[RMDB]
RNA sequence: GGGAACGACUCGAGUAGAGUCGAAAAACGAGUCCGUACGCGGACUCGAAGGGCCCCAGAAGACCAAGGGGCCCAAACCUACCACUCAUUAGAUGCAUGGAAAUCACUAGGUGGUACGUCACCUAGAACACGCUUUUAAGCUUCGGCUUAAAAGCAACGAGCAUAUUUUGUUCGCAAAAUAUGCUCGAAAAGAAACAACAACAACAAC
Reactivity to 2A3 in 0.01 (KOAc 150mM, MgCl2 10mM, bicine 150mM(pH8.5), 24C), signal-to-noise 2, nucleotides 027 to 156: a020c000g000a000g000u000c010c000g020u030a000c220g000c010g100g000a000c010u000c000g000a000a000g010g000g000c000c000c000c000a080g110a300a050g090a130c060c060a110a110g000g000g000g020c010c000c000a000a000a000c000c000u000a030c000c010a040c030u090c010a090u070u220a070g080a140u110g110c100a060u050g080g030a070a090a060u150c030a040c080u000a000g000g000u010g000g070u060a160c030g130u100c020a000c000c010u000a000g030a040a060c120a030c100g000c000u000u000u010u000a010a000g000c000u010u050c120g070g000c000u000u000a000a000a000a000g000c000a000a010
Record summary: This 207-nucleotide RNA was probed chemically with 2A3. The RNA was probed in 150 mM KOAc, 10 mM MgCl2 and 150 mM bicine (pH 8.5) at 24 C. The 2A3 profile rests on 1,100 reads.